RNA sequence: GGGAACGACUCGAGUAGAGUCGAAAAACCUCUGACUUCCACAGGAGUCAGGGACUGAGCCCACAGGAGGAAGUUCAGUGCCCAUCCUCUCUUAUCUGAGCAUUUCAGGCUUCUUGGGGGCAGGACAACACGUAAAUUCAUUCGUGAAUUUACGUGUAAAAGAAACAACAACAACAAC
Reactivity to 2A3 in 0.01 (KOAc 150mM, MgCl2 10mM, bicine 150mM(pH8.5), 24C), signal-to-noise 7, nucleotides 027 to 126: a000c010c000u000c000u010g050a080c010u060u040c070c090a160c080a300g010g010a000g000u000c020a010g000g010g000a020c020u040g030a020g040c010c040c000a040c030a040g150g040a070g030g010a120a050g010u050u060c030a010g020u070g110c020c000c010a070u040c010c010u050c010u020c030u130u130a130u110c040u040g020a000g040c040a100u050u160u190c070a060g110g040c020u050u010c000u050u040g030g010g000g020g000c010a010g020g030a020c040a040
Reactivity to DMS in 0.01 (KOAc 150mM, MgCl2 10mM, bicine 150mM(pH8.5), 24C), signal-to-noise 7, nucleotides 027 to 126: a100c080c000u010c010u000g010a030c000u000u000c000c260a160c300a170g010g000a000g000u000c000a010g010g010g010a090c070u010g010a090g000c000c000c010a130c090a060g010g000a040g010g000a090a080g000u000u000c050a030g000u000g000c020c010c010a120u000c080c020u000c040u000c090u000u000a100u010c070u000g010a030g020c100a120u010u000u000c180a080g010g010c080u000u000c040u000u000g020g000g000g000g010c060a150g000g000a100c170a120